[RMDB]
RNA sequence: GGGAACGACUCGAGUAGAGUCGAAAAGUCACUCCAGUUGACCAAUACAUGUGUGGCGUUGAUGGAAAACCCAUUAGUGCCUACGCAUUUUUAAUGGCCAAGGAUGGAAUAACCAAACUGGCUGAUGUAAUCUUAUCCUUCGGGAUAAGAAAAAGAAACAACAACAACAAC
Reactivity to DMS in 0.01 (KOAc 150mM, MgCl2 10mM, bicine 150mM(pH8.5), 24C), signal-to-noise 9, nucleotides 027 to 129: g020u010c000a100c110u000c030c110a130g030u040u000g020a130c060c000a040a040u030a080c300a030u020g020u020g030u000g030g040c030g020u030u020g030a000u050g030g020a090a130a090a250c240c020c000a040u040u000a020g000u060g020c060c010u060a010c030g000c020a020u010u020u040u050u040a050a080u000g020g000c000c000a100a040g030g050a190u020g030g020a190a090u050a150a130c060c000a030a060a110c040u000g000g010c300u040g000a080u030g000u000a070a070
Reactivity to 2A3 in 0.01 (KOAc 150mM, MgCl2 10mM, bicine 150mM(pH8.5), 24C), signal-to-noise 7, nucleotides 027 to 129: g050u000c010a000c060u050c020c020a050g030u040u040g150a240c010c020a080a050u120a130c090a030u010g020u000g000u010g000g000c010g000u000u000g000a000u020g000g000a040a050a030a090c020c000c000a000u000u000a010g000u000g000c000c020u040a020c000g000c000a010u000u000u010u010u110a170a120u110g020g010c010c010a080a050g010g000a030u070g010g050a150a100u120a220a100c030c000a050a020a010c010u020g020g000c030u020g030a050u070g080u130a100a070
Description
This 170-nucleotide RNA was probed chemically with DMS and 2A3. The RNA was probed in 150 mM KOAc, 10 mM MgCl2 and 150 mM bicine (pH 8.5) at 24 C. DMS adducts were read by reverse transcription with MarathonRT. For DMS, 25,826 sequencing reads were counted. It was measured as part of the RMDB library 15KLIB.